[RMDB]
RNA sequence: GGGAACGACUCGAGUAGAGUCGAAAAUCUUUGGCUUUCGAGCCAAAGAGUGGGUGCAAUGUCCUUUAAGCACCAAACACGGAAAAACCGUGAAAGGAGAAAAAAAUCACAGUUUCGACUGUGAUAAGAGAUACAGGAGUUUCGACUCCUGUAUCUCAAAAGAAACAACAACAACAAC
Reactivity to 2A3 in 0.01 (KOAc 150mM, MgCl2 10mM, bicine 150mM(pH8.5), 24C), signal-to-noise 2, nucleotides 027 to 126: u000c000u040u000u010g000g000c000u080u080u030c260g110a000g020c000c010a000a010a010g010a000g020u100g120g000g010u040g010c010a200a300u170g090u130c010c000u060u070u060a080a000g020c000a000c010c020a010a020a000c000a020c000g000g000a230a160a000a090a220c010c010g010u010g030a060a010a010g070g000a040g090a030a080a030a030a000a000a040u020c020a040c000a010g010u030u070u150c180g090a020c000u010g000u000g010a000u000a010a030
Reactivity to DMS in 0.01 (KOAc 150mM, MgCl2 10mM, bicine 150mM(pH8.5), 24C), signal-to-noise 2, nucleotides 027 to 126: u010c000u020u000u000g020g020c000u030u000u010c210g030a010g000c000c000a000a000a020g000a050g060u030g020g000g000u000g010c000a110a100u010g010u000c010c010u000u000u030a130a250g010c020a030c000c000a070a070a300c020a010c020g000g000a130a180a040a190a140c040c000g010u000g000a000a050a020g000g030a100g040a020a010a030a090a040a070a010u010c000a020c000a020g000u000u010u010c190g010a030c000u000g010u000g030a000u010a010a070